RNA sequence: GGGAACGACUCGAGUAGAGUCGAAAACGUAAGACCUGGAUUGGGCUGCUCCGAUGUAAGUCGGUGAUACUCCGGUAGCCAAGGAUCUUCCUUGGCGAGCACGGUGAGAAUCGGCCCCCAGGGUGAGUCUGAGAAAGUAUUUCGAUACUUUCUCAGAAAAAGAAACAACAACAACAAC
Reactivity to 2A3 in 0.01 (KOAc 150mM, MgCl2 10mM, bicine 150mM(pH8.5), 24C), signal-to-noise 9, nucleotides 027 to 126: c030g040u080a070a030g120a140c000c000u020g030g040a140u130u280g020g000g000c010u020g010c010u010c010c000g010a010u020g110u250a080a160g020u000c000g010g000u020g020a030u040a090c020u000c010c000g000g030u020a010g000c000c000a000a000g020g000a100u150c100u130u110c120c000u000u000g000g000c010g000a010g010c140a150c050g010g000u030g010a070g070a040a060u090c040g010g000c000c000c000c000c000a000g000g000g010u030g020a020g070
Reactivity to DMS in 0.01 (KOAc 150mM, MgCl2 10mM, bicine 150mM(pH8.5), 24C), signal-to-noise 9, nucleotides 027 to 126: c070g010u030a100a090g010a120c000c000u000g000g000a190u030u020g010g010g010c000u000g010c050u000c000c000g010a020u000g000u050a070a130g010u000c000g000g000u000g000a100u010a270c170u000c000c000g000g010u000a250g000c000c000a000a000g000g000a110u030c250u020u010c000c000u000u000g000g000c000g000a050g010c090a130c010g000g000u000g000a070g010a140a060u010c040g000g000c000c000c000c000c000a010g000g000g010u000g000a100g010
Source: RMDB libraries RFM100 and RFMREP, as collected in RNAgym.
Chemical mapping of a 177-nucleotide RNA with 2A3 and DMS.
For 2A3 the reverse transcriptase was SuperScript II with manganese.
The RNA was probed in 150 mM KOAc, 10 mM MgCl2 and 150 mM bicine (pH 8.5) at 24 C.